Structure probing data (2A3 and DMS) for a 177-nucleotide construct. Values cover nucleotides 27 to 126. Conditions: 150 mM KOAc, 10 mM MgCl2 and 150 mM bicine (pH 8.5), 24 C. DMS (dimethyl sulfate) methylates the pairing face of unpaired adenines and cytosines. The data come from the RNA Mapping Database (RMDB), library M2PK90. For 2A3 the reverse transcriptase was SuperScript II with manganese.

RNA sequence: GGGAACGACUCGAGUAGAGUCGAAAAAAUACGAGCGUAAACGCGUCUUGACGUGAGUGGGCCUAGACUGUAGGCUAUAUAGCCCAAGUGUGCAUAGCGCACAAUACGCUGAUCUACAGUCAUUGAAUCUCGUGUAAUGUUUCGACAUUACACGAGAAAAAGAAACAACAACAACAAC
Reactivity to 2A3 in 0.01 (KOAc 150mM, MgCl2 10mM, bicine 150mM(pH8.5), 24C), signal-to-noise 2, nucleotides 027 to 126: a000a010u210a040c070g000a000g000c000g010u010a000a090a000c010g010c000g000u020c040u060u190g160a010c000g010u020g030a060g080u050g000g010g020c000c030u020a020g000a010c010u010g010u010a000g020g000c050u020a010u010a010u050a230g000c000c000c000a030a040g030u000g000u020g000c070a180u200a220g050c020g000c040a000c000a010a030u030a000c000g000c010u000g000a030u000c000u020a000c000a000g000u000c010a010u020u200g090a120a090
Reactivity to DMS in 0.01 (KOAc 150mM, MgCl2 10mM, bicine 150mM(pH8.5), 24C), signal-to-noise 4, nucleotides 027 to 126: a080a080u000a040c120g010a040g010c010g000u000a040a120a160c040g000c000g010u000c060u010u000g000a030c010g020u010g000a110g020u000g010g010g000c010c090u000a070g000a010c010u000g000u000a010g010g020c230u000a050u000a160u000a100g010c000c010c000a070a180g000u000g020u000g010c000a200u000a130g000c170g040c010a000c010a040a060u000a030c040g010c010u000g010a070u000c010u000a000c000a010g000u000c010a150u010u010g010a070a080